[RMDB]
RNA sequence: GGGAACGACUCGAGUAGAGUCGAAAAAGCGGCCACCAGAACCAGCGGCCCAGUAGUGCGGCGAUGGAUGGCGUCAUGAACGAUCGCACGAUCAACGUGUCGAACAGCAAACCCAGACCGAUGGUGGGACGGGUGAAGUGUUCGCACUUCACCCGUCAAAAGAAACAACAACAACAAC
Reactivity to DMS in 0.01 (KOAc 150mM, MgCl2 10mM, bicine 150mM(pH8.5), 24C), signal-to-noise 2, nucleotides 027 to 126: a130g010c070g010g030c000c000a010c030c000a050g040a190a130c060c000a050g050c070g030g040c000c000c060a080g000u030a120g000u010g040c050g020g010c040g000a180u000g060g000a110u000g020g010c050g000u050c010a120u000g030a060a190c210g010a100u000c000g000c030a100c050g010a040u020c180a040a300c040g000u060g020u030c010g000a010a160c150a100g040c020a170a090a110c000c000c000a130g000a080c000c120g030a090u010g000g000u000g000g000
Reactivity to 2A3 in 0.01 (KOAc 150mM, MgCl2 10mM, bicine 150mM(pH8.5), 24C), signal-to-noise 4, nucleotides 027 to 126: a010g070c050g030g000c000c000a010c020c000a060g000a080a030c020c030a010g070c020g060g020c000c000c000a060g070u210a000g020u060g090c010g010g000c050g030a030u070g030g050a120u030g020g020c000g010u030c050a080u120g040a110a000c060g040a040u060c010g000c040a030c040g010a060u100c080a070a130c040g010u100g100u220c040g020a070a060c000a010g070c040a050a040a050c000c000c000a010g010a030c000c040g040a070u150g070g060u050g080g000